[RMDB]
RNA sequence: GGGAACGACUCGAGUAGAGUCGAAAAGAUAUGGAAUGACCCAGAAUGAAGUGGCGUUGAAAUCGGAAACGAUGGAGCCAUCAAAGUCUGCAUUCCUAAGUCAAAGUCGCACGUUCGCGUGCGACAAGUAUGCGGAUACGUUCGCGUAUCCGCAUACAAAAGAAACAACAACAACAAC
Reactivity to DMS in 0.01 (KOAc 150mM, MgCl2 10mM, bicine 150mM(pH8.5), 24C), signal-to-noise 1, nucleotides 027 to 126: g010a050u000a300u000g000g040a040a000u010g000a170c180c160c070a020g010a100a020u000g000a290a140g010u000g010g020c000g050u010u000g020a080a190a030u000c000g000g010a180a070a100c010g030a010u000g000g010a120g010c010c000a010u010c010a080a180a140g000u000c000u000g000c010a010u000u000c000c020u000a060a070g000u000c050a070a060a180g000u000c030g000c000a000c000g020u000u000c150g000c040g030u000g000c000g000a000c000a040a060
Reactivity to 2A3 in 0.01 (KOAc 150mM, MgCl2 10mM, bicine 150mM(pH8.5), 24C), signal-to-noise 1, nucleotides 027 to 126: g010a020u050a030u130g020g020a000a010u010g050a160c080c030c020a020g010a010a020u140g020a090a060g070u010g000g040c070g240u300u060g030a090a060a010u010c040g010g000a080a000a000c000g000a020u000g000g040a000g000c000c000a000u080c000a040a000a020g030u010c010u000g000c000a000u000u000c000c000u010a200a010g020u100c090a150a100a050g020u010c000g000c020a000c020g000u070u100c300g040c000g130u000g000c000g000a000c030a000a000
Chemical mapping of a 177-nucleotide RNA with DMS and 2A3.
For 2A3 the reverse transcriptase was SuperScript II with manganese.
Conditions: 150 mM KOAc, 10 mM MgCl2 and 150 mM bicine (pH 8.5), 24 C.
Reactivities are given for positions 27 through 126.